[RMDB]
RNA sequence: GGGAACGACUCGAGUAGAGUCGAAAACUCUGGCUGCGGUUGCGUGGCCUCUGUGGGAGACAGCCUCAGGGUAUGGACCGUUGAGGCUACCCGUCUCAAGAGGGUAGAGGGAAGCAGGUUCGUGUACGUGAAGGGUCUGAUUCGUCAGACCCUUCACAAAAGAAACAACAACAACAAC
Reactivity to DMS in 0.01 (KOAc 150mM, MgCl2 10mM, bicine 150mM(pH8.5), 24C), signal-to-noise 1, nucleotides 027 to 126: c020u000c050u000g010g040c020u000g000c060g040g020u000u000g000c060g090u010g000g010c030c000u000c040u020g000u000g000g030g000a010g000a100c140a100g000c020c020u030c020a070g000g000g000u000a170u010g020g000a080c000c000g030u000u010g020a020g000g000c010u000a010c090c070c100g010u000c080u000c110a120a060g000a120g000g030g010u000a050g020a100g000g000g010a140a110g010c090a060g010g010u000u000c100g040u010g000u010a070c190

Record summary:
This 177-nucleotide RNA was probed chemically with DMS. The RNA was probed in 150 mM KOAc, 10 mM MgCl2 and 150 mM bicine (pH 8.5) at 24 C. For DMS, 1,299 sequencing reads were counted. The data come from the RNA Mapping Database (RMDB), library OK2TST.